The record gives the reactivity of an RNA of 177 nucleotides to DMS. It was measured as part of the RMDB library TTRDES. For DMS the reverse transcriptase was MarathonRT. Reactivities are given for positions 27 through 126.
RNA sequence: GGGAACGACUCGAGUAGAGUCGAAAAGAUAUGGACCAUGUCUAGUGGAGAGCGGGAUUCGGAAACGAAUUCCGCUCGUUGAAACUAGAGCAUGGUCCUAAGUCAAAGCUACAGUUCGCUGUAGCAAUCUUCCGAAGUAGUUCGCUACUUCGGAAGAAAAAGAAACAACAACAACAAC
Reactivity to DMS in 0.01 (KOAc 150mM, MgCl2 10mM, bicine 150mM(pH8.5), 24C), signal-to-noise 2, nucleotides 027 to 126: g010a040u010a300u000g000g000a030c000c020a020u000g030u000c010u000a000g000u000g000g000a040g000a010g030c000g000g020g000a010u000u000c000g000g030a060a080a210c010g000a020a020u000u000c000c000g020c020u000c000g000u000u060g000a270a200a020c000u000a000g000a080g000c010a000u000g010g020u000c000c000u000a000a080g010u000c070a060a160a110g000c000u000a000c010a020g020u000u010c300g030c000u010g020u000a000g020c010a050a040